[RMDB]
RNA sequence: GGGAACGACUCGAGUAGAGUCGAAAAGGGCCUGUCCUUGUAGUAUAAACUAAUACACCAGUCUUGUAAACCGGAGAUGAAAACCUUUUUCCAAGGACAAAUCAGAGAAAAAGUCUUUAACUCCACCAAUGUCGGGAGAGUUCGCUCUCCCGACAUUAAAAGAAACAACAACAACAAC
Reactivity to 2A3 in 0.01 (KOAc 150mM, MgCl2 10mM, bicine 150mM(pH8.5), 24C), signal-to-noise 1, nucleotides 027 to 126: g060g000g070c000c090u030g010u000c000c000u090u000g060u000a000g000u000a030u000a070a190a150c190u120a010a010u070a010c030a030c000c000a040g070u000c010u120u290g150u300a000a040a000c040c050g000g000a000g000a000u160g030a030a030a020a060c030c060u040u000u220u000u000c020c000a000a000g020g000a000c000a010a010a010u090c010a010g170a000g070a130a000a000a300a000g060u000c000u000u060u030a110a060c030u000c080c030a020c040c080
Conditions: 150 mM KOAc, 10 mM MgCl2 and 150 mM bicine (pH 8.5), 24 C. The record gives the reactivity of an RNA of 177 nucleotides to 2A3. The 2A3 profile rests on 413 reads. Source: RMDB library OK1LIB, as collected in RNAgym.